[RMDB]
RNA sequence: GGGAACGACUCGAGUAGAGUCGAAAAAGCAGCCACCCUUGAAAGAGUGCGUAAUAGCUCACUGGUCAAGUGAUCCUGCGCCGACAAUGUAGCGGGGCUCAAGUACACCGCCGAAGCCGCGGCAUUCCUAACAAUACAACUUCGGUUGUAUUGUUAGAAAAGAAACAACAACAACAAC
Reactivity to DMS in 0.01 (KOAc 150mM, MgCl2 10mM, bicine 150mM(pH8.5), 24C), signal-to-noise 9, nucleotides 027 to 126: a070g020c080a050g010c050c030a090c030c040c010u000u000g000a090a100a090g000a070g010u020g010c040g010u010a080a080u030a170g000c090u000c010a040c010u000g000g010u020c110a070a030g010u000g000a060u010c120c050u000g000c030g010c020c020g010a080c130a080a070u020g010u010a070g010c040g010g000g000g010c030u010c100a060a100g010u020a100c100a110c040c020g000c020c030g000a110a110g010c060c070g000c030g000g010c050a110u010u010c070
Reactivity to 2A3 in 0.01 (KOAc 150mM, MgCl2 10mM, bicine 150mM(pH8.5), 24C), signal-to-noise 9, nucleotides 027 to 126: a000g060c050a020g010c020c010a140c030c010c000u020u060g100a110a090a030g100a030g020u160g010c020g020u060a080a090u070a180g020c010u000c010a020c020u070g050g160u160c090a080a020g010u010g040a030u040c010c010u040g010c010g000c010c010g040a070c050a080a110u220g030u160a040g030c040g020g010g020g000c010u030c040a040a040g040u050a030c060a040c040c020g000c010c010g060a060a010g030c050c030g030c010g020g000c010a040u080u060c010
Structure probing data (DMS and 2A3) for a 177-nucleotide construct. For DMS the reverse transcriptase was MarathonRT. The RNA was probed in 150 mM KOAc, 10 mM MgCl2 and 150 mM bicine (pH 8.5) at 24 C. Values cover nucleotides 27 to 126.